RNA sequence: GGGAACGACUCGAGUAGAGUCGAAAACGAAACAUUACUGCCACAAAUGGGCAUUUACCUCCUGUUUGAAUUCUGAUUGCUUAUGAAGGAGAACUCAGUAGCCUCCUGGGCCAGUCCCUUUUAUCUUUGGGAAACUGACUAUUAGAAAGUUCUUCUCGAAGAUUACAAGGUUCGCCUUGUAAUCUUCAAAAGAAACAACAACAACAAC
Reactivity to DMS in 0.01 (KOAc 150mM, MgCl2 10mM, bicine 150mM(pH8.5), 24C), signal-to-noise 1, nucleotides 027 to 156: c030g010a150a070a050c090a230u010u000a070c110u000g070c050c050a300c020a010a100a060u000g010g000g070c170a080u000u000u000a130c050c070u010c030c000u010g050u010u010u000g030a050a120u000u010c080u000g000a110u010u000g010c020u010u000a120u000g000a090a060g010g020a040g000a080a100c030u000c030a140g010u030a200g040c040c010u000c020c010u000g000g020g000c020c000a050g000u000c000c000c000u040u010u000u010a120u020c180u010u010u000g010g000g010a090a060a060c020u010g000a020c000u010a180u020u020a120g010a080a120a150g000u000u010c010u010u010c020u000c070
Reactivity to 2A3 in 0.01 (KOAc 150mM, MgCl2 10mM, bicine 150mM(pH8.5), 24C), signal-to-noise 2, nucleotides 027 to 156: c030g060a020a030a040c080a040u190u180a040c020u020g040c010c010a090c000a090a080a120u170g020g030g000c010a030u020u080u170a150c020c020u020c010c010u080g120u050u030u110g050a040a000u130u020c040u080g050a170u100u160g060c090u220u090a070u260g040a010a050g000g030a010g000a040a010c010u010c100a060g070u080a050g060c010c040u050c040c040u050g010g000g040c010c010a000g050u080c020c000c000u030u090u090u070a250u140c130u100u110u010g040g000g010a020a130a060c010u010g050a010c000u030a120u210u080a080g080a040a100a020g030u030u020c000u020u020c010u010c070